RNA sequence: GGGAACGACUCGAGUAGAGUCGAAAAAUACACUGCACGUGCGUGCGAGCAGUUAUCGAAAUAAUCGUACGUACGUAAAGACCCAACUCUACUCGAUGCGAGGGUCAGCAAAGUCGUUCCCAUAUAAGUACUACUAUCGUUUCGACGAUAGUAGUACAAAAGAAACAACAACAACAAC
Reactivity to 2A3 in 0.01 (KOAc 150mM, MgCl2 10mM, bicine 150mM(pH8.5), 24C), signal-to-noise 5, nucleotides 027 to 126: a000u170a020c090a010c110u130g050c110a000c010g010u000g000c000g000u010g000c000g000a030g030c100a060g030u130u100a130u270c170g100a070a010a100u150a040a060u050c010g000u010a000c000g000u000a000c000g000u000a030a000a000g000a000c020c000c000a010a010c000u020c000u000a010c000u000c010g030a030u050g000c010g010a130g040g030g030u040c020a000g000c040a110a300a000g010u000c020g000u000u000c000c000c000a000u000a000u000a000a000
Reactivity to DMS in 0.01 (KOAc 150mM, MgCl2 10mM, bicine 150mM(pH8.5), 24C), signal-to-noise 2, nucleotides 027 to 126: a070u010a160c150a140c080u000g000c260a000c000g000u000g020c000g020u000g000c000g000a010g010c280a160g010u000u000a070u030c120g000a040a030a050u020a080a060u010c000g000u000a000c000g020u000a030c000g000u030a010a100a020g000a090c060c030c010a110a030c000u000c010u000a000c010u000c000g010a100u000g020c080g000a120g000g010g000u000c040a300g030c060a040a150a060g010u000c000g010u000u000c000c000c000a010u020a030u000a110a170
Source information
This 177-nucleotide RNA was probed chemically with 2A3 and DMS. The reactions ran in a buffer of 150 mM KOAc, 10 mM MgCl2 and 150 mM bicine (pH 8.5), at 24 C.